Source: RMDB library OK1LIB, as collected in RNAgym. An RNA of 177 nucleotides, treated with DMS and 2A3 and read out base by base.
[RMDB]
RNA sequence: GGGAACGACUCGAGUAGAGUCGAAAAUGAUAGGAUUAGAAGAUGGGCAUGGACACAGCUUGAAGGUGAGGAUCCUGGUACCGUUUAUCAAGCUCUAAUAGAAUCACUGAUCGAUUUAAAGGAUGCAUCGCGUAGUUUUUUUCGAAAAACUACGCGAAAAAGAAACAACAACAACAAC
Reactivity to DMS in 0.01 (KOAc 150mM, MgCl2 10mM, bicine 150mM(pH8.5), 24C), signal-to-noise 3, nucleotides 027 to 126: u070g010a140u010a100g000g020a020u000u010a040g040a170a110g010a040u000g000g000g020c040a040u000g000g030a060c120a130c160a020g030c060u000u000g010a070a050g000g000u000g000a100g020g000a100u010c020c000u020g010g000u010a050c050c060g000u000u050u040a080u020c090a050a070g010c000u000c050u020a040a120u060a160g000a060a030u000c040a130c110u010g000a060u020c080g000a060u000u020u000a010a100a110g000g000a050u040g000c150a190
Reactivity to 2A3 in 0.01 (KOAc 150mM, MgCl2 10mM, bicine 150mM(pH8.5), 24C), signal-to-noise 2, nucleotides 027 to 126: u240g020a070u050a050g140g010a000u090u100a090g070a250a040g060a110u080g000g000g050c060a130u080g000g000a080c080a000c000a100g030c030u030u030g020a110a000g050g020u040g050a090g110g030a000u000c020c010u000g060g000u000a050c000c000g080u090u110u000a240u100c030a060a010g000c030u000c000u020a070a210u140a170g070a170a020u080c090a140c140u060g020a080u130c090g010a010u000u000u300a090a100a020g070g000a030u130g010c010a050

The DMS profile rests on 3,132 reads.